[RMDB]
RNA sequence: GGGAACGACUCGAGUAGAGUCGAAAAUAGAGCAUCUCAUAGGAAAGUACCGUUAGAAAGAUCAACUCGUAAUUGAUUGAGUAUAAAUAACCUCUAGAGGGAGGUCGCGUGGAAACUAUGAUGAAACACCCCUGUCUUACUUCGGUAAGACAGGGGUAAAAGAAACAACAACAACAAC
Reactivity to 2A3 in 0.01 (KOAc 150mM, MgCl2 10mM, bicine 150mM(pH8.5), 24C), signal-to-noise 5, nucleotides 027 to 126: u200a000g120a010g060c050a030u040c000u000c030a000u000a010g040g000a040a060a000g010u000a000c000c000g000u000u000a000g020a020a010a010g010a000u000c000a000a010c020u040c180g260u300a140a070u000u000g010a000u010u000g000a000g030u030a000u000a010a070a030u090a010a020c010c000u010c030u060a150g060a100g200g210g000a000g000g000u010c000g010c010g020u190g010g010a000a000a000c000u000a000u010g010a030u090g020a030a020a000c070
Reactivity to DMS in 0.01 (KOAc 150mM, MgCl2 10mM, bicine 150mM(pH8.5), 24C), signal-to-noise 2, nucleotides 027 to 126: u020a090g020a230g020c020a090u000c020u000c000a000u020a050g000g000a040a110a040g000u000a060c000c000g000u050u000a000g000a210a180a280g000a000u000c000a000a000c050u040c300g010u000a140a270u000u030g000a000u000u000g000a020g000u000a030u000a010a100a110u030a010a040c010c000u000c000u000a050g020a200g040g000g000a000g000g010u030c000g000c030g000u010g000g010a090a070a170c020u000a000u000g000a000u090g010a080a030a080c100
Record summary
Chemical mapping of a 177-nucleotide RNA with 2A3 and DMS. DMS (dimethyl sulfate) methylates the pairing face of unpaired adenines and cytosines. The RNA was probed in 150 mM KOAc, 10 mM MgCl2 and 150 mM bicine (pH 8.5) at 24 C. Source: RMDB libraries RFM100 and RFMREP, as collected in RNAgym. 2A3 adducts were read by reverse transcription with SuperScript II with manganese.